[RMDB]
RNA sequence: GGGAACGACUCGAGUAGAGUCGAAAACGAUAGUGCAGCUUUUAAGCUCAAAUCAAACUGAUGAAAGGGAAUAUUUAAUUGAUUAUUUUCUAAGUCGGGUUUGAGGGGAAAGGCCUGACGGGAGUUAUCCUAAUAGCUCAUUCGUGAGCUAUUAGGAAAAAGAAACAACAACAACAAC
Reactivity to 2A3 in 0.01 (KOAc 150mM, MgCl2 10mM, bicine 150mM(pH8.5), 24C), signal-to-noise 3, nucleotides 027 to 126: c010g010a060u100a060g170u190g070c040a030g000c000u050u100u030u200a060a030g020c020u000c010a030a030a010u030c020a060a060a080c060u060g030a060u050g010a160a120a040g030g000g030a050a020u040a070u110u240u140a300a230u170u020g030a020u050u160a020u040u090u020u000c000u020a020a050g020u010c000g040g000g000u000u020u030g020a010g000g020g000g030a050a030a000g000g000c050c050u040g010a000c000g010g000g010a060g030u120u170a050
Reactivity to DMS in 0.01 (KOAc 150mM, MgCl2 10mM, bicine 150mM(pH8.5), 24C), signal-to-noise 3, nucleotides 027 to 126: c040g010a100u000a070g010u010g000c050a070g010c010u000u010u000u020a050a300g010c030u000c030a020a040a080u000c040a050a060a130c070u010g010a060u010g010a060a110a100g000g000g000a040a030u000a040u000u000u000a080a160u010u000g000a070u000u000a040u010u010u010u010c000u000a080a290g020u000c210g010g000g000u000u000u000g000a040g000g000g000g020a070a030a050g010g020c060c080u000g010a040c040g010g000g000a150g010u010u010a090

This 177-nucleotide RNA was probed chemically with 2A3 and DMS. High DMS reactivity at an A or C suggests that its Watson-Crick edge is free. Reactivities are given for positions 27 through 126. The RNA was probed in 150 mM KOAc, 10 mM MgCl2 and 150 mM bicine (pH 8.5) at 24 C. For 2A3 the reverse transcriptase was SuperScript II with manganese. For 2A3, 2,385 sequencing reads were counted.